Chemical mapping of a 170-nucleotide RNA with DMS and 2A3. For DMS the reverse transcriptase was MarathonRT. For DMS, 6,171 sequencing reads were counted. 2A3 adducts were read by reverse transcription with SuperScript II with manganese. It was measured as part of the RMDB library 15KLIB.
RNA sequence: GGGAACGACUCGAGUAGAGUCGAAAACUAGCGAGUGGAUGUUCCGCCUCCCCGGAGUCCCGAGUGAGGCUUAUCCCGGGGAAUCCGGCCAAGUCCCGAAAUGUCUAGUCCCGUGGUCUCACUUCCAAUGCGUUCGCCUUCGGGCGAACGAAAAGAAACAACAACAACAAC
Reactivity to DMS in 0.01 (KOAc 150mM, MgCl2 10mM, bicine 150mM(pH8.5), 24C), signal-to-noise 4, nucleotides 027 to 129: c000u030a070g000c110g050a100g000u070g000g000a070u030g030u060u020c150c090g090c300c030u020c040c030c030c060g050g000a140g020u050c000c000c000g000a030g060u060g050a040g010g020c080u020u010a100u080c090c050c020g060g000g030g000a060a030u040c140c050g040g000c090c060a080a270g090u010c000c020c010g030a110a020a000u000g000u010c020u010a020g000u010c030c080c050g020u110g020g040u010c030u020c040a040c090u020u030c000c050a260a080u060g020
Reactivity to 2A3 in 0.01 (KOAc 150mM, MgCl2 10mM, bicine 150mM(pH8.5), 24C), signal-to-noise 3, nucleotides 027 to 129: c040u020a000g010c000g030a060g080u230g020g060a040u080g060u210u020c040c010g010c000c000u020c000c000c000c000g010g010a120g070u020c050c020c020g010a010g050u080g020a060g000g000c000u000u110a140u160c000c000c000g000g000g000g000a030a060u110c060c020g000g000c000c000a130a020g010u030c010c010c000g070a060a080a050u170g040u010c000u000a000g020u000c030c000c000g030u060g060g000u000c020u010c000a040c010u100u030c040c010a040a030u220g040